[RMDB]
RNA sequence: GGGAACGACUCGAGUAGAGUCGAAAAGGGCUUGACGCAUCGCCCGAAUAUGAUGCAUGUGCUUUUGCACUAAGAUAAAUGUCCGUAUUGUAGGGGACCUAGAACCUACUCAUUAAUGUCCGAAGAGUCUGGGACGAUCAUCAGGCAAGACUAAGAAACUGGUAUUUUAUUUCGAUAAAAUACCAGUAAAAGAAACAACAACAACAAC
Reactivity to 2A3 in 0.01 (KOAc 150mM, MgCl2 10mM, bicine 150mM(pH8.5), 24C), signal-to-noise 4, nucleotides 027 to 156: g020g010g000c050u090u120g090a010c050g010c020a000u010c020g010c000c000c000g000a010a010u160a090u110g050a010u030g000c020a050u090g010u010g000c040u080u140u210u300g000c020a000c030u050a090a060g050a130u150a090a200a030u160g020u030c020c020g020u080a070u120u090g020u020a010g000g000g010g030a020c000c030u010a040g070a060a020c020c000u010a020c010u010c020a010u020u270a180a090u180g040u000c020c030g060a140a020g030a030g040u000c000u080g020g000g030a030c010g040a050u070c020a020u010c030a000g010g000c010a030a060g020a060c050u090a150a050g040a070a210
Reactivity to DMS in 0.01 (KOAc 150mM, MgCl2 10mM, bicine 150mM(pH8.5), 24C), signal-to-noise 3, nucleotides 027 to 156: g020g010g000c000u010u000g010a080c080g010c070a030u000c020g020c030c050c000g000a080a080u000a020u010g010a030u000g030c050a120u010g020u000g000c040u000u010u000u010g020c020a060c030u000a110a140g010a130u000a030a070a100u000g010u000c050c070g030u000a100u000u000g000u000a040g070g000g010g000a160c060c070u000a110g010a120a160c000c000u000a040c040u010c050a060u000u000a060a120u010g010u000c030c030g020a130a180g010a210g020u000c030u000g010g020g020a040c060g000a060u000c030a070u000c000a040g000g000c010a080a110g020a100c050u000a070a150g000a130a190